An RNA of 177 nucleotides, treated with DMS and read out base by base. Reactivities are given for positions 27 through 126. The DMS profile rests on 716 reads. The RNA was probed in 150 mM KOAc, 10 mM MgCl2 and 150 mM bicine (pH 8.5) at 24 C.
[RMDB]
RNA sequence: GGGAACGACUCGAGUAGAGUCGAAAAGCAUCAUACGGCUCUUGAUGUAUUCAUGGCAAUCGGUAGGAAUAGCAAGGGGUAGCUGAUUAUCCCGGAGUGAUUUUUCAAAAUCACCAGACGGGAUCAGUCGGAGGUUACAUUUCGAUGUAACCUCCGAAAAAGAAACAACAACAACAAC
Reactivity to DMS in 0.01 (KOAc 150mM, MgCl2 10mM, bicine 150mM(pH8.5), 24C), signal-to-noise 1, nucleotides 027 to 126: g000c010a000u000c010a060u000a070c090g000g020c040u010c050u000u000g040a000u000g000u010a080u000u000c100a060u000g000g010c060a140a040u030c090g010g020u000a030g010g050a130a100u010a050g020c100a070a100g000g010g000g020u000a070g010c010u020g010a090u010u000a110u000c000c020c000g000g000a060g000u000g010a010u000u000u010u040u040c250a010a080a010a010u000c000a000c020c200a150g000a300c010g010g000g010a050u000c120a040g020